[RMDB]
RNA sequence: GGGAACGACUCGAGUAGAGUCGAAAAGUUCCCUCUUAGCGUGGAGGUUUAACUACGCUCGUUCCCCAUAUCGGUGUGGGCGCACCGGAUUUAUAAAUCAAAGUCCUCUAGGGAACGGAAAGGAACAAAAAUCCAUGGGAGUUCGCUCCCAUGGAAACAUAAGAUUGGUGUUCGCACCAAUCUUAUGAAAAGAAACAACAACAACAAC
Reactivity to 2A3 in 0.01 (KOAc 150mM, MgCl2 10mM, bicine 150mM(pH8.5), 24C), signal-to-noise 3, nucleotides 027 to 156: g010u020u010c000c000c000u020c010u010u030a010g000c000g000u020g000g050a050g010g070u130u170u120a050a040c010u010a000c000g010c010u010c000g000u000u000c000c000c000c000a040u090a030u140c010g010g000u000g000u010g010g010g000c060g040c010a000c000c020g000g000a010u020u280u010a230u130a080a040a000u030c120a030a050a000g020u010c020c000u030c030u070a050g020g000g020a010a040c030g010g020a060a080a030g040g020a040a020c020a040a110a020a000a010u000c000c000a000u000g000g000g000a030g000u060u090c110g080c090u000c000c000c000a000u000g000g000a000a000a000
Reactivity to DMS in 0.01 (KOAc 150mM, MgCl2 10mM, bicine 150mM(pH8.5), 24C), signal-to-noise 4, nucleotides 027 to 156: g010u000u000c010c000c010u000c060u010u000a040g010c030g070u000g020g000a110g010g010u000u000u000a100a160c020u000a030c000g020c030u000c010g010u000u000c010c000c000c060a220u020a070u000c030g010g040u000g010u000g030g020g040c080g020c020a040c020c020g010g010a180u010u000u000a100u000a080a080a090u000c040a050a060a080g030u000c010c030u000c080u000a060g010g010g000a030a070c020g020g000a060a060a100g010g000a090a130c040a030a120a070a130a130u000c000c000a030u000g010g010g010a060g030u000u000c300g020c010u000c000c010c000a000u000g000g000a000a010a080